RNA sequence: GGGAACGACUCGAGUAGAGUCGAAAAGCGGGUGCGCAGUAUGUGUUCCCACAGCGGCGUUAGCUGCACUGCACCGAUAGGAGCUUCCGCUCGGCGCUGAAUUUUCAUUAUAGCUGGUAGUGGAGCACGUGGUUCAGGAUUUCGAUCCUGAACCACGAAAAGAAACAACAACAACAAC
Reactivity to DMS in 0.01 (KOAc 150mM, MgCl2 10mM, bicine 150mM(pH8.5), 24C), signal-to-noise 2, nucleotides 027 to 126: g000c070g000g010g000u010g070c120g050c000a050g010u000a130u020g010u010g000u000u010c000c000c000a300c120a100g000c000g010g000c040g010u020u010a130g000c000u000g000c010a150c080u000g010c030a090c000c010g030a100u000a090g000g000a110g000c020u000u000c010c060g000c030u000c000g040g000c100g030c130u000g040a030a110u000u010u010u000c140a060u000u000a180u010a130g000c000u020g040g020u000a020g050u000g020g020a070g000c040a210
Reactivity to 2A3 in 0.01 (KOAc 150mM, MgCl2 10mM, bicine 150mM(pH8.5), 24C), signal-to-noise 1, nucleotides 027 to 126: g130c060g010g010g040u130g060c040g030c050a010g000u170a090u260g090u000g010u020u000c000c000c000a030c040a010g010c000g000g000c000g070u190u280a060g000c010u000g000c010a010c040u030g000c010a050c030c000g000a050u110a090g190g090a080g010c000u150u000c020c000g050c030u000c000g020g060c030g000c050u000g000a040a110u130u170u110u220c080a040u070u200a110u120a210g040c010u020g070g000u100a010g000u030g000g010a010g030c000a010
Chemical mapping of a 177-nucleotide RNA with DMS and 2A3.
Values cover nucleotides 27 to 126.
For DMS the reverse transcriptase was MarathonRT.